RNA sequence: GGGAACGACUCGAGUAGAGUCGAAAAGAUAUGGAUCUCCCAGGGAGCUUAGUGUCGGAAACGACAUGGGAGCGACGAUCUGGAGGAUCCUAAGUCAAACAGCAGUCGAGUUCGCUCGACUGCUGAACAGAACUACUUUGUUCGCAAAGUAGUUCUGAAAAGAAACAACAACAACAAC
Reactivity to DMS in 0.01 (KOAc 150mM, MgCl2 10mM, bicine 150mM(pH8.5), 24C), signal-to-noise 4, nucleotides 027 to 126: g000a020u000a010u010g000g000a000u000c000u000c020c000c010a020g000g000g010a010g020c000u000u010a300g010u000g000u000c000g020g000a010a010a030c000g010a010c000a020u000g010g010g000a010g030c000g000a090c300g000a010u010c010u000g000g000a010g000g010a010u000c000c000u000a000a070g000u000c000a150a130a300c020a000g010c010a020g000u000c000g000a010g010u000u020c300g020c010u000c000g000a020c000u000g010c000u000g000a060a130
Reactivity to 2A3 in 0.01 (KOAc 150mM, MgCl2 10mM, bicine 150mM(pH8.5), 24C), signal-to-noise 3, nucleotides 027 to 126: g000a000u020a010u040g000g000a000u010c010u010c020c000c000a000g000g000g010a030g010c030u070u080a050g030u030g010u010c000g020g010a000a000a000c010g020a000c010a010u100g080g220g120a010g000c000g060a110c010g000a000u000c000u000g020g000a040g040g030a020u000c000c000u000a010a000g000u000c020a120a040a150c010a010g000c000a000g000u000c010g000a000g040u080u200c300g090c080u000c000g000a000c010u010g000c000u000g000a010a010

An RNA of 177 nucleotides, treated with DMS and 2A3 and read out base by base.
For 2A3, 14,653 sequencing reads were counted.
It was measured as part of the RMDB library TTRDES.
2A3 adducts were read by reverse transcription with SuperScript II with manganese.